[RMDB]
RNA sequence: GGGAACGACUCGAGUAGAGUCGAAAAAAGGACAAAAACUGACCAGAAUCUGAUAUGAGAACCAGCUUUCCUAUAAUUACCUAGUGAAAAGUGCAGAAAUUUGUUCAGUUUAAAAUGGAAGCGGUGAUCAUGCCAUAUGGUUCGCCAUAUGGCAUGAAAAAGAAACAACAACAACAAC
Reactivity to DMS in 0.01 (KOAc 150mM, MgCl2 10mM, bicine 150mM(pH8.5), 24C), signal-to-noise 1, nucleotides 027 to 126: a000a030g000g010a070c080a100a140a020a010a010c020u000g000a030c100c020a050g030a060a090u000c050u020g010a160u020a030u010g000a140g020a040a070c040c060a130g000c010u000u000u000c000c010u000a010u000a030a100u000u030a050c080c040u030a060g010u030g000a060a000a040a110g010u000g020c050a070g000a030a070a100u020u010u000g000u000u010c030a040g010u000u000u000a070a040a040a060u000g010g010a030a050g010c070g000g040u010g050a080